[RMDB]
RNA sequence: GGGAACGACUCGAGUAGAGUCGAAAAGGGCCAACUUCUCUCAUGGCGCAAAUUCAACUUACGGGCUAGAGAGAUUACCAGCAUGGGAAACAUACUAUGACUGUGAACUUACCGUUAGUUACAAGAAGGCAAUUGAAUACUUCGGUAUUCAAUUGCCAAAAGAAACAACAACAACAAC
Reactivity to 2A3 in 0.01 (KOAc 150mM, MgCl2 10mM, bicine 150mM(pH8.5), 24C), signal-to-noise 2, nucleotides 027 to 126: g110g000g000c020c000a040a000c110u120u010c000u000c000u000c010a100u040g000g000c050g000c080a050a080a140u300u120c040a020a010c000u030u060a010c050g000g150g000c120u180a000g020a000g000a000g020a050u000u020a170c000c000a030g000c000a000u000g010g000g020a070a210a050c040a050u210a040c020u040a040u050g160a260c030u030g070u080g090a030a130c050u050u140a040c030c000g060u030u000a000g000u040u080a150c080a050a080g010a080a000
Reactivity to DMS in 0.01 (KOAc 150mM, MgCl2 10mM, bicine 150mM(pH8.5), 24C), signal-to-noise 1, nucleotides 027 to 126: g130g000g020c030c010a060a040c110u130u000c000u000c000u000c000a200u000g000g070c020g080c200a010a150a160u060u060c300a030a000c010u010u000a050c100g000g000g000c300u060a130g000a000g010a010g000a090u000u060a300c220c000a000g000c000a000u000g000g000g000a070a150a030c300a060u040a060c000u070a000u000g060a210c000u000g030u010g000a090a070c070u000u030a170c000c030g000u000u000a130g000u000u000a210c060a060a050g000a030a030